[RMDB]
RNA sequence: GGGAACGACUCGAGUAGAGUCGAAAAUCGGAGUGGAACAGAGAAAUCACCUCCAGAGGACCCCUUCAGCGAACAGAAGAGCGCUCGGGUGGUAGGAGAAAGACCAUAGCGAUGGGAGGGGAUGCUAGCUUACUUUGAUGUUCGCAUCAAAGUAAGCAAAAGAAACAACAACAACAAC
Reactivity to 2A3 in 0.01 (KOAc 150mM, MgCl2 10mM, bicine 150mM(pH8.5), 24C), signal-to-noise 1, nucleotides 027 to 126: u080c000g000g030a060g020u130g010g060a130a150c040a120g080a080g080a200a120a070u000c020a090c000c050u000c010c010a020g020a000g070g080a070c010c090c000c050u010u040c000a020g000c000g010a030a000c010a090g130a150a000g020a100g000c000g040c070u040c010g060g000g030u090g000g070u040a030g030g050a080g010a110a090a000g040a000c030c020a030u020a000g060c010g070a070u140g040g020g070a050g030g040g010g000a020u100g050c070u090a030
Reactivity to DMS in 0.01 (KOAc 150mM, MgCl2 10mM, bicine 150mM(pH8.5), 24C), signal-to-noise 1, nucleotides 027 to 126: u000c030g000g000a070g020u000g010g000a160a100c120a200g000a110g000a080a120a140u000c030a160c070c010u010c020c040a170g040a140g000g030a250c050c000c040c030u000u010c060a010g000c000g000a040a040c000a160g010a120a100g000a060g020c060g010c020u000c100g010g010g010u000g000g000u000a020g010g010a130g000a080a120a060g000a090c030c030a060u000a110g030c130g040a130u000g000g010g000a030g000g000g000g020a020u000g010c140u000a130
This 177-nucleotide RNA was probed chemically with 2A3 and DMS. Values cover nucleotides 27 to 126. 2A3 adducts were read by reverse transcription with SuperScript II with manganese. For 2A3, 995 sequencing reads were counted.